[RMDB]
RNA sequence: GGGAACGACUCGAGUAGAGUCGAAAAGGUUCAUGGUUCGCCAUGAACCAAAAGUACAGCUAUGAGUACAAGUGUCAUAGCAAAAGAUCGUAAGAUCAAAAAAAAGUAGCUCCUUCGGGAGCUACAAGCUAUACUCGUAGUUCGCUACGAGUAUAGCAAAAGAAACAACAACAACAAC
Reactivity to 2A3 in 0.01 (KOAc 150mM, MgCl2 10mM, bicine 150mM(pH8.5), 24C), signal-to-noise 2, nucleotides 027 to 126: g000g000u010u020c010a010u010g040g010u050u080c160g060c040c000a010u010g000a000a000c000c000a020a000a020a000g000u000a000c000a000g000c000u010a010u020g000a010g010u030a030c140a300a070g050u060g000u290c010a010u020a000g000c000a040a050a000a060g010a010u030c030g050u110a090a030g010a020u040c030a020a100a080a010a000a010a000a000g000u010a000g000c000u020c000c000u050u080c190g080g000g000a000g020c000u000a000c000a000a000
Reactivity to DMS in 0.01 (KOAc 150mM, MgCl2 10mM, bicine 150mM(pH8.5), 24C), signal-to-noise 1, nucleotides 027 to 126: g010g000u000u020c000a010u000g000g000u000u010c260g020c000c010a000u030g000a030a030c000c000a020a010a050a160g030u000a020c010a140g000c000u000a000u000g020a010g010u000a000c000a080a200g020u010g000u000c000a000u000a020g020c000a060a140a070a210g000a010u000c010g000u020a120a130g000a000u010c000a000a000a000a200a070a000a070a120g000u000a000g010c010u000c000c000u000u020c120g010g020g000a040g000c000u010a000c000a040a070